[RMDB]
RNA sequence: GGGAACGACUCGAGUAGAGUCGAAAAACGUGAUUCGUCACGUAAGAACGGGGUCUAAGAGCGCAUGAGGGACAUGCUCUGAAGCCUCCACGGAGCAACAGCCUCCCCACCAUGCCCCUUAGACGGAGGCACCCACGAAGAUUGCUUCGGCAAUCAAAACUAUUACCUCAUUCGUGAGGUAAUAGUUAAAAGAAACAACAACAACAAC
Reactivity to 2A3 in 0.01 (KOAc 150mM, MgCl2 10mM, bicine 150mM(pH8.5), 24C), signal-to-noise 6, nucleotides 027 to 156: a000c000g000u000g000a040u030u110c180g050u030c100a010c000g000u030a020a040g060a080a030c110g060g010g020g000u000c000u010a010a000g010a010g010c180g000c050a020u070g070a300g020g010g000a040c010a050u030g000c000u000c000u000g020a070a010g000c000c000u000c000c000a010c010g010g000a000g000c010a000a160c030a180g100c050c080u050c020c020c010c010a220c100c030a010u010g000c000c020c000c000u000u000a000g000a010c010g000g000a000g000g010c000a030c020c000c000a070c050g050a080a060g000a010u000u010g010c000u030u100c190g090g000c010a000a000u000c000a050a060
Reactivity to DMS in 0.01 (KOAc 150mM, MgCl2 10mM, bicine 150mM(pH8.5), 24C), signal-to-noise 3, nucleotides 027 to 156: a040c020g040u010g020a050u000u000c270g060u000c010a010c000g020u000a070a080g010a080a210c040g010g020g040g030u000c010u010a030a020g010a040g010c160g020c040a050u000g000a120g020g010g020a010c050a300u000g010c020u000c020u020g010a040a100g000c000c000u000c010c010a300c060g010g000a050g020c010a060a070c120a160g000c040c030u010c020c000c010c160a160c150c000a040u000g000c000c010c000c010u000u000a030g010a060c080g010g010a050g050g020c020a100c020c000c010a170c190g000a170a190g010a050u000u000g010c000u000u000c300g040g010c030a010a040u010c050a030a050